[RMDB]
RNA sequence: GGGAACGACUCGAGUAGAGUCGAAAAGAUAUGGACCGAUUCCAGGCAACAGCUACAGGGUCGGAAACGACCCGUAGACAUGCCUGGAUCGGUCCUAAGUCAAAAGCGUCUACUUCGGUAGACGCAACUUCAUGUCGAUGUUCGCAUCGACAUGAAGAAAAGAAACAACAACAACAAC
Reactivity to DMS in 0.01 (KOAc 150mM, MgCl2 10mM, bicine 150mM(pH8.5), 24C), signal-to-noise 1, nucleotides 027 to 126: g000a060u000a300u000g020g010a000c000c010g000a020u000u000c010c010a000g000g020c010a070a110c300a200g000c000u000a010c000a170g010g000g010u000c030g000g000a000a010a120c000g010a000c020c010c020g010u000a010g000a040c100a230u000g020c020c020u010g010g000a000u000c000g040g000u000c010c000u010a010a010g010u000c040a090a090a090a100g000c010g000u000c000u000a010c000u050u000c170g040g050u000a000g000a000c010g000c000a010a010
Reactivity to 2A3 in 0.01 (KOAc 150mM, MgCl2 10mM, bicine 150mM(pH8.5), 24C), signal-to-noise 2, nucleotides 027 to 126: g020a020u070a040u110g000g000a020c000c010g000a000u300u070c050c020a000g030g020c070a280a080c080a280g070c000u060a040c100a300g000g000g030u000c030g030g000a080a050a020c000g020a000c060c000c000g010u000a000g000a020c030a100u300g000c020c000u010g050g000a000u000c000g000g000u000c010c000u020a000a000g020u020c010a000a000a060a070g000c010g000u000c000u020a010c000u020u100c300g170g000u000a010g000a060c000g000c000a000a010

This 177-nucleotide RNA was probed chemically with DMS and 2A3. Reactivities are given for positions 27 through 126. Source: RMDB library TTRDES, as collected in RNAgym. For 2A3, 2,989 sequencing reads were counted. The reactions ran in a buffer of 150 mM KOAc, 10 mM MgCl2 and 150 mM bicine (pH 8.5), at 24 C. DMS (dimethyl sulfate) methylates the pairing face of unpaired adenines and cytosines.